An RNA of 177 nucleotides, treated with DMS and 2A3 and read out base by base. Values cover nucleotides 27 to 126. Reactivities are rounded to 0.1 and cut off at 0 and 3.

RNA sequence: GGGAACGACUCGAGUAGAGUCGAAAAGAUAUGGAUCCGGUACUACUCCCUUGGACCCUCUUUCGGAAACGAAAGAGGCUAGGGAGUAGUACACGGAUCCUAAGUCAAACUCUGCUUCGGCAGAGAACCAUAGUAUAGUGUUCGCACUAUACUAUGGAAAAGAAACAACAACAACAAC
Reactivity to DMS in 0.01 (KOAc 150mM, MgCl2 10mM, bicine 150mM(pH8.5), 24C), signal-to-noise 9, nucleotides 027 to 126: g000a060u000a300u010g000g010a000u000c000c010g020g010u000a010c000u000a000c010u000c000c000c000u000u000g020g010a140c300c010c010u000c000u000u000u010c000g020g000a170a110a210c010g010a010a010a000g000a020g000g010c030u000a000g010g010g000a010g000u000a000g000u000a000c010a040c010g010g010a000u000c000c000u000a000a100g000u000c060a150a160a240c010u000c000u000g000c010u000u010c230g010g010c000a010g000a010g000a060a140
Reactivity to 2A3 in 0.01 (KOAc 150mM, MgCl2 10mM, bicine 150mM(pH8.5), 24C), signal-to-noise 6, nucleotides 027 to 126: g030a050u110a060u190g010g010a010u000c010c010g030g010u000a000c000u010a010c010u030c010c020c030u050u150g220g090a300c060c010c000u010c010u010u010u000c010g040g030a110a100a080c010g010a010a000a000g010a000g000g010c010u000a000g000g000g000a010g000u000a000g000u000a000c010a000c000g010g000a000u000c000c000u000a010a000g000u010c010a030a020a150c000u000c000u010g030c000u070u100c290g190g000c010a000g010a000g000a010a020
Overview
The RNA was probed in 150 mM KOAc, 10 mM MgCl2 and 150 mM bicine (pH 8.5) at 24 C.